[RMDB]
RNA sequence: GGGAACGACUCGAGUAGAGUCGAAAAAAUUUCACAAUUCGUAGGUCCGAACAAAGAUAUUCCAGCACCAGAUGUAUUUACAAACUCACAAAUUAUGGCUUGGAUGAUGGAUGAAUAUAGUGCAUUAGCUGUAAAAGUGAUUCGUCACUUUUACAGCAAAAGAAACAACAACAACAAC
Reactivity to DMS in 0.01 (KOAc 150mM, MgCl2 10mM, bicine 150mM(pH8.5), 24C), signal-to-noise 3, nucleotides 027 to 126: a020a070u000u000u010c030a020c150a110a060u030u020c050g000u020a030g020g000u010c080c010g000a070a050c100a110a080a090g000a140u000a100u020u010c000c030a050g020c000a030c030c070a030g000a180u010g020u000a020u000u000u010a070c110a060a060a130c130u010c070a110c140a070a010a100u010u010a090u010g000g010c070u000u000g000g000a060u010g010a040u010g010g000a040u010g000a100a050u010a040u010a070g000u000g000c100a050u020u010a090
Reactivity to 2A3 in 0.01 (KOAc 150mM, MgCl2 10mM, bicine 150mM(pH8.5), 24C), signal-to-noise 4, nucleotides 027 to 126: a000a000u100u140u120c070a070c020a040a060u050u010c040g030u050a060g120g020u050c010c000g020a070a020c070a040a090a020g080a020u060a050u080u050c020c000a000g010c060a070c020c010a030g030a120u050g060u030a080u000u130u020a130c110a100a140a080c050u120c100a070c010a050a090a030u160u110a110u250g040g000c020u080u100g040g030a030u060g040a010u040g040g000a030u050g020a070a000u230a020u080a060g060u040g050c030a100u180u060a020